Chemical mapping of a 177-nucleotide RNA with 2A3 and DMS. Values cover nucleotides 27 to 126. The data come from the RNA Mapping Database (RMDB), library OK2TRN. The reactions ran in a buffer of 150 mM KOAc, 10 mM MgCl2 and 150 mM bicine (pH 8.5), at 24 C.

RNA sequence: GGGAACGACUCGAGUAGAGUCGAAAACUGACCUUCACCCUGCCCAAAGAGCCGGUGCGCCAGCGCCUGCGCGGGAUGGACACGUUCAACGUGCUGCGCGGCGGCGAGUACCUCUUCAUGCCCAGCCCUCCGAAUCAUCAUUCGUGAUGAUUCGGAGAAAAGAAACAACAACAACAAC
Reactivity to 2A3 in 0.01 (KOAc 150mM, MgCl2 10mM, bicine 150mM(pH8.5), 24C), signal-to-noise 2, nucleotides 027 to 126: c010u030g080a060c000c000u050u010c010a090c000c000c020u010g030c020c000c000a080a120a030g070a010g040c020c040g060g150u050g030c040g020c020c060a080g010c030g040c010c000u100g010c000g000c010g030g030g020a080u050g120g060a080c010a010c130g140u270u220c060a140a040c050g030u050g050c010u010g020c000g020c060g050g000c030g020g040c000g020a030g020u020a040c000c010u020c000u050u070c040a050u060g010c000c000c000a030g010c000c000
Reactivity to DMS in 0.01 (KOAc 150mM, MgCl2 10mM, bicine 150mM(pH8.5), 24C), signal-to-noise 2, nucleotides 027 to 126: c040u000g000a120c050c010u000u000c100a030c050c010c000u000g010c010c020c030a040a160a080g000a180g010c040c010g010g010u010g010c070g010c030c060a100g030c060g030c040c020u000g020c030g010c020g010g000g010a070u000g000g000a280c090a030c030g010u010u020c080a070a140c080g010u000g000c000u000g000c010g040c030g010g030c000g010g010c020g010a070g010u000a040c020c030u000c010u000u000c040a080u000g010c040c010c010a160g010c060c060